[RMDB]
RNA sequence: GGGAACGACUCGAGUAGAGUCGAAAAUAUUCAGCUUCGCGUCCUUGAGGCCUGGCGUAACGCGGCUCUUGCCACCAGGUUGCCUCCGCUAGUCGAGCGGACUUGGUCUCUUCCGCCCAAAGCCCUUGAGUAUAUAUAAGUUCGCUUAUAUAUACUCAAAAGAAACAACAACAACAAC
Reactivity to 2A3 in 0.01 (KOAc 150mM, MgCl2 10mM, bicine 150mM(pH8.5), 24C), signal-to-noise 4, nucleotides 027 to 126: u180a060u070u110c040a020g020c010u080u060c030g020c010g050u020c030c010u040u040g060a040g020g010c000c010u020g040g010c040g040u050a120a060c050g010c030g080g000c000u040c010u090u120g020c020c010a040c010c010a020g000g050u060u060g030c000c010u030c010c010g010c030u050a070g140u180c070g070a010g020c010g000g000a010c000u060u080g020g020u010c000u000c000u060u010c010c010g020c020c010c010a060a070a040g030c010c000c000u000u030
Reactivity to DMS in 0.01 (KOAc 150mM, MgCl2 10mM, bicine 150mM(pH8.5), 24C), signal-to-noise 5, nucleotides 027 to 126: u010a100u010u000c070a100g010c060u000u000c060g010c040g000u000c020c030u000u010g010a090g010g010c030c040u010g010g000c200g010u000a060a090c160g010c050g010g010c040u000c090u000u010g020c050c040a100c050c040a040g010g000u010u000g010c030c040u000c030c030g010c050u000a090g010u010c130g020a100g000c000g000g010a060c070u010u000g010g010u000c050u000c030u000u000c030c030g020c020c020c050a070a110a110g010c010c040c050u000u000

The record gives the reactivity of an RNA of 177 nucleotides to 2A3 and DMS. For 2A3, 8,762 sequencing reads were counted. The data come from the RNA Mapping Database (RMDB), library VIROID. Reactivities are given for positions 27 through 126. 2A3 adducts were read by reverse transcription with SuperScript II with manganese. DMS adducts were read by reverse transcription with MarathonRT.